Chemical mapping of a 207-nucleotide RNA with 2A3 and DMS.
RNA sequence: GGGAACGACUCGAGUAGAGUCGAAAAGGAUAUCAUAAAGGAUACAGAAGAACAGCCAGAUGGAGAGAUUCAAGGAACGUGGGAGGGGGCACGGAGCUUUCAUGCCCUCUCCAGGCACGCUACCCUCCAGGAACCUCCAAACGGUUCAGCUGUCUGAGUUUUAAAUCCUAUUCGUAGGAUUUAAAACAAAAGAAACAACAACAACAAC
Reactivity to 2A3 in 0.01 (KOAc 150mM, MgCl2 10mM, bicine 150mM(pH8.5), 24C), signal-to-noise 3, nucleotides 027 to 156: g050g010a050u020a020u180c060a070u280a160a120a060g050g010a050u100a130c060a040g100a080a000g010a150a010c010a020g040c040c020a020g000a060u050g020g000a000g000a010g040a100u040u100c070a040a020g040g000a050a010c010g020u000g030g000g000a000g000g000g000g000g010c010a000c050g090g020a060g130c070u160u210u120c010a020u010g000c000c000c010u000c000u030c000c000a010g010g010c000a000c010g000c000u060a140c000c010c000u070c040c000a010g090g000a010a010c000c000u020c030c000a060a040a070c040g020g000u050u030c020a070g000c020u030g010u030c010u020g040a040
Reactivity to DMS in 0.01 (KOAc 150mM, MgCl2 10mM, bicine 150mM(pH8.5), 24C), signal-to-noise 2, nucleotides 027 to 156: g030g060a100u000a060u010c050a130u000a120a110a190g000g010a090u000a090c050a090g010a130a130g000a050a050c010a050g040c050c060a110g020a210u000g040g010a060g010a060g000a150u000u000c050a150a180g000g020a040a050c020g010u000g000g010g010a020g000g010g000g010g000c010a020c010g020g020a090g070c190u020u040u000c020a030u000g000c030c000c000u010c010u000c010c010a000g030g020c030a020c010g000c010u010a090c060c000c000u020c050c020a060g010g000a050a010c040c010u000c020c120a080a060a170c090g010g000u000u000c040a130g040c010u000g000u010c000u000g010a300
The RNA was probed in 150 mM KOAc, 10 mM MgCl2 and 150 mM bicine (pH 8.5) at 24 C. DMS adducts were read by reverse transcription with MarathonRT. The 2A3 profile rests on 1,798 reads.